[RMDB]
RNA sequence: GGGAACGACUCGAGUAGAGUCGAAAAUCGGAUUCACUGGGCUUAAAGGGUGCGUAGGCGGCCUGUUAAGUAGGGCGUGAAAUCUGUCGGCUCAACCGGCAAAUUGCGUUCUAAACUGGCAGGCUUGGAUACUGUACACGUUCGCGUGUACAGUAUCAAAAGAAACAACAACAACAAC
Reactivity to DMS in 0.01 (KOAc 150mM, MgCl2 10mM, bicine 150mM(pH8.5), 24C), signal-to-noise 3, nucleotides 027 to 126: u000c050g000g000a110u000u010c050a070c040u000g020g000g000c060u000u020a070a100a080g010g000g020u010g010c120g020u000a080g020g020c100g020g010c000c000u010g000u000u000a000a010g000u000a030g000g010g010c010g030u000g010a020a040a030u010c070u000g020u000c000g010g000c120u010c300a100a250c020c000g010g020c010a000a020a090u000u000g000c010g020u000u000c000u010a010a010a040c020u000g000g010c000a010g000g000c000u000u000g010
Reactivity to 2A3 in 0.01 (KOAc 150mM, MgCl2 10mM, bicine 150mM(pH8.5), 24C), signal-to-noise 2, nucleotides 027 to 126: u090c030g030g030a010u060u060c030a020c110u050g030g030g000c020u040u060a110a060a050g050g010g000u070g010c030g030u050a060g040g090c000g000g000c020c010u000g000u020u000a020a020g000u010a020g000g000g000c010g000u020g120a000a050a050u050c040u010g010u010c000g000g000c000u010c300a070a090c050c020g010g000c000a010a010a020u030u030g000c000g000u000u000c010u020a030a040a010c020u000g010g000c010a000g000g000c000u010u010g010